[RMDB]
RNA sequence: GGGAACGACUCGAGUAGAGUCGAAAAGCGUACUACACGUGUCUAGCCGUUGAAAGCAGGGAGUAGACGUUCCCAAAUAGGAACGUCGCAGAUACCCUGCUGGAGGCUAGCACGUGUAUCGCAAAACCGCUUGACAGUUUCGACUGUCAAGCGGUAAACUUUCACCUACGUUCGCGUAGGUGAAAGUAAAAGAAACAACAACAACAAC
Reactivity to DMS in 0.01 (KOAc 150mM, MgCl2 10mM, bicine 150mM(pH8.5), 24C), signal-to-noise 1, nucleotides 027 to 156: g070c010g020u000a080c070u000a050c040a000c020g030u030g020u030c040u000a020g040c000c000g050u010u010g010a140a160a020g000c010a000g000g010g020a220g010u030a160g020a050c010g000u040u030c120c000c010a030a170a200u000a050g030g050a010a000c000g030u000c000g010c120a120g040a160u000a050c030c000c000u010g000c020u000g010g030a130g020g010c000u000a020g010c010a020c000g040u010g020u010a000u000c010g000c020a050a030a090a110c000c000g000c010u010u000g000a070c010a010g010u000u000u000c290g000a120c010u000g010u000c010a010a020g020c000g000g000u010a000a030
Reactivity to 2A3 in 0.01 (KOAc 150mM, MgCl2 10mM, bicine 150mM(pH8.5), 24C), signal-to-noise 2, nucleotides 027 to 156: g000c000g060u070a130c050u000a000c020a000c020g020u020g070u140c020u000a000g000c020c000g200u200u050g020a040a010a000g020c000a000g010g050g000a090g010u070a070g010a000c010g000u000u000c080c040c000a190a260a130u230a040g020g000a000a000c000g010u010c010g000c010a000g000a000u130a070c000c000c000u000g000c000u000g010g000a000g000g040c020u000a000g000c000a010c010g000u000g000u000a000u000c000g030c000a120a020a000a000c000c000g000c000u010u010g000a000c000a010g010u020u080u110c100g190a020c000u000g000u010c000a000a000g020c000g000g010u000a000a010